[RMDB]
RNA sequence: GGGAACGACUCGAGUAGAGUCGAAAAGCGAGGGAAGCAAUUGAAAAGGAACUUGCCCUGAGCACUCCUGGUGCAGGUCUCCACCUGCACAUUGGGUGGGGCUCCUGGGAGGGAGACUCAGCCUUCCAGCAUAACUGGGAUUCGUCCCAGUUAUGCUAAAAGAAACAACAACAACAAC
Reactivity to 2A3 in 0.01 (KOAc 150mM, MgCl2 10mM, bicine 150mM(pH8.5), 24C), signal-to-noise 3, nucleotides 027 to 126: g020c010g000a030g010g010g050a100a050g040c020a040a100u110u180g140a160a140a050a130g140g050a080a080c030u010u030g030c000c010c020u010g010a010g010c000a020c070u050c000c000u030g080g010u040g030c000a000g030g000u060c070u020c190c030a010c000c010u020g030c020a010c010a020u040u120g030g040g020u140g000g000g040g020c030u040c020c050u070g020g040g060a110g010g010g010a030g010a010c020u000c050a050g060c010c000u040u060c050c020
Reactivity to DMS in 0.01 (KOAc 150mM, MgCl2 10mM, bicine 150mM(pH8.5), 24C), signal-to-noise 3, nucleotides 027 to 126: g010c040g000a250g000g000g010a080a060g020c020a050a100u000u010g000a070a080a140a120g000g010a100a100c130u000u010g010c010c020c030u000g010a180g020c010a100c110u000c010c010u000g020g000u000g000c010a020g000g000u000c100u000c280c140a150c010c000u000g000c020a010c080a060u000u000g000g010g010u010g000g020g020g000c080u010c090c080u010g020g010g000a150g000g000g000a130g000a100c060u010c010a050g010c060c020u000u020c070c080